[RMDB]
RNA sequence: GGGAACGACUCGAGUAGAGUCGAAAACAUGCGGCCAGCCUCGACGAUGACUUCGCCGGUUACCGGAUGCAGGAUCGGAUCGAGAGCCGUACGGCCCAGAACGCGCUGGCCGAUCGAGGCGACGAUAAUGAGUUUUACUCUUCGGAGUAAAACUCAUAAAAGAAACAACAACAACAAC
Reactivity to DMS in 0.01 (KOAc 150mM, MgCl2 10mM, bicine 150mM(pH8.5), 24C), signal-to-noise 2, nucleotides 027 to 126: c120a090u000g020c010g000g010c000c020a070g050c040c030u000c000g030a040c000g010a160u010g000a100c020u000u010c010g030c010c040g000g000u020u010a060c030c000g000g010a040u000g000c140a030g020g000a080u000c000g010g020a090u000c020g000a070g010a180g000c060c050g020u000a120c170g010g010c010c010c020a130g010a090a050c040g010c040g000c010u000g020g000c000c010g000a040u000c070g010a230g000g000c050g000a120c070g000a100u010a060
Reactivity to 2A3 in 0.01 (KOAc 150mM, MgCl2 10mM, bicine 150mM(pH8.5), 24C), signal-to-noise 1, nucleotides 027 to 126: c020a030u150g000c000g000g040c010c000a020g000c020c000u020c040g010a010c000g010a030u080g130a200c000u040u000c030g000c010c040g050g090u210u150a250c080c000g100g020a120u060g000c050a010g000g000a050u000c000g010g010a020u030c010g020a010g010a010g040c030c010g010u010a030c060g020g000c010c000c020a010g080a060a040c060g000c010g000c040u010g020g000c020c020g010a030u070c030g010a030g040g050c050g000a090c060g000a060u050a180